[RMDB]
RNA sequence: GGGAACGACUCGAGUAGAGUCGAAAAGUUCACAGACUAGAUGGUGGUGGGUUCUCGGAUGCGUCCCGGGGCUUAAGAUAUAGUCGGGCCUGCUUGGAAACAGCGGGAAAUCGCAGAUGCAUUCACCGUUCCGUAGGUGAACCUGCAGAAGGAUCAACGUAAAGGUUUAGUUCGCUAAACCUUUACGAAAAGAAACAACAACAACAAC
Reactivity to DMS in 0.01 (KOAc 150mM, MgCl2 10mM, bicine 150mM(pH8.5), 24C), signal-to-noise 2, nucleotides 027 to 156: g020u010u010c050a070c070a120g000a140c030u000a060g020a160u000g020g020u020g000g040u000g020g000g000u000u010c040u000c070g000g010a100u000g010c090g020u000c040c020c000g030g000g020g030c060u000u000a060a100g000a120u000a110u000a080g030u000c010g010g010g020c000c000u000g020c020u010u000g030g000a220a130a100c040a090g010c010g010g010g000a030a040a070u000c060g040c020a100g020a230u000g010c050a140u000u000c010a030c030c000g000u010u000c150c210g000u000a090g000g000u000g000a020a030c000c070u000g030c000a070g000a110a080g010g000a090u000c020a060a170
Reactivity to 2A3 in 0.01 (KOAc 150mM, MgCl2 10mM, bicine 150mM(pH8.5), 24C), signal-to-noise 2, nucleotides 027 to 156: g030u100u070c040a020c040a060g040a040c070u050a020g020a110u070g000g050u020g020g030u030g030g010g020u110u060c010u020c040g050g020a070u090g030c050g020u080c000c020c020g020g000g000g000c010u080u050a120a010g060a060u090a030u060a110g010u040c010g000g010g020c000c010u050g040c010u020u050g020g000a100a040a000c010a050g010c000g000g010g000a020a040a020u140c040g000c000a000g010a050u040g030c010a010u010u010c000a000c030c010g080u210u100c030c030g090u140a040g000g000u010g000a000a000c000c020u030g000c020a010g050a050a030g060g020a040u070c030a020a050
An RNA of 207 nucleotides, treated with DMS and 2A3 and read out base by base. The reactions ran in a buffer of 150 mM KOAc, 10 mM MgCl2 and 150 mM bicine (pH 8.5), at 24 C. For DMS the reverse transcriptase was MarathonRT. For 2A3, 1,962 sequencing reads were counted. In probing experiments dimethyl sulfate is read out at A N1 and C N3, which are open when not base-paired.